Source: RMDB library OK2TST, as collected in RNAgym. This 177-nucleotide RNA was probed chemically with DMS. For DMS, 785 sequencing reads were counted.
[RMDB]
RNA sequence: GGGAACGACUCGAGUAGAGUCGAAAAGAACAGUCGCCGGGCACCGAACCCGACCACCUCGCCGGCCGAGGUGCGGAUGGGCCACAGCAGCCGACGGUGAAACCGGUCCAUCGGGCCGUGCCGGCCCAAUUAUCAUCCGCUUCGGCGGAUGAUAAUUAAAAGAAACAACAACAACAAC
Reactivity to DMS in 0.01 (KOAc 150mM, MgCl2 10mM, bicine 150mM(pH8.5), 24C), signal-to-noise 1, nucleotides 027 to 126: g020a130a180c070a160g000u010c180g030c010c010g030g010g020c000a020c050c010g020a220a180c070c010c010g000a140c200c010a020c000c010u000c010g020c070c180g000g010c080c010g020a020g010g010u000g000c090g000g000a150u010g030g000g000c040c040a110c110a140g000c110a120g000c010c000g000a130c000g020g000u010g000a010a120a100c070c020g000g010u010c040c050a080u000c080g000g020g040c020c030g020u000g010c130c090g020g010c030c020c030